[RMDB]
RNA sequence: GGGAACGACUCGAGUAGAGUCGAAAAGAUAUGGACGUAAGAGCGAUAAGCUACACCGAUCGGAAACGAUCGUUGUAGCUUUUGACGCUUGAAGUCCUAAGUCAAAAGAGCUUCUUCGGAAGCUCAACGUUGUAUGAAUCUUCGGAUUCAUACAACGAAAAGAAACAACAACAACAAC
Reactivity to DMS in 0.01 (KOAc 150mM, MgCl2 10mM, bicine 150mM(pH8.5), 24C), signal-to-noise 5, nucleotides 027 to 126: g010a040u000a300u010g000g010a010c000g000u010a120a300g010a000g010c010g000a110u010a020a010g010c000u000a010c000a000c030c000g000a010u010c010g010g000a110a070a190c000g010a000u000c000g020u000u010g000u000a000g000c000u000u000u000u000g030a170c040g010c000u000u000g000a120a230g000u000c000c000u000a040a110g000u010c030a060a050a100a110g010a010g010c000u000u000c000u000u020c190g010g000a010a000g000c010u000c000a010a050
Reactivity to 2A3 in 0.01 (KOAc 150mM, MgCl2 10mM, bicine 150mM(pH8.5), 24C), signal-to-noise 1, nucleotides 027 to 126: g050a020u060a050u170g010g010a000c010g040u060a070a040g010a000g050c000g020a020u010a050a000g030c000u010a000c000a000c000c000g030a000u000c020g020g020a030a060a060c020g010a000u000c000g000u000u000g000u010a010g000c010u000u000u000u000g010a000c000g000c000u010u000g020a030a010g000u000c000c010u010a060a020g060u010c040a030a020a090a130g010a000g010c000u000u020c010u020u090c270g130g020a000a000g000c000u000c000a010a000
Chemical mapping of a 177-nucleotide RNA with DMS and 2A3.
The reactions ran in a buffer of 150 mM KOAc, 10 mM MgCl2 and 150 mM bicine (pH 8.5), at 24 C.
It was measured as part of the RMDB library TTRDEL.
High 2A3 reactivity points to a flexible backbone, as in loops and unpaired stretches.
The 2A3 profile rests on 4,012 reads.
DMS adducts were read by reverse transcription with MarathonRT.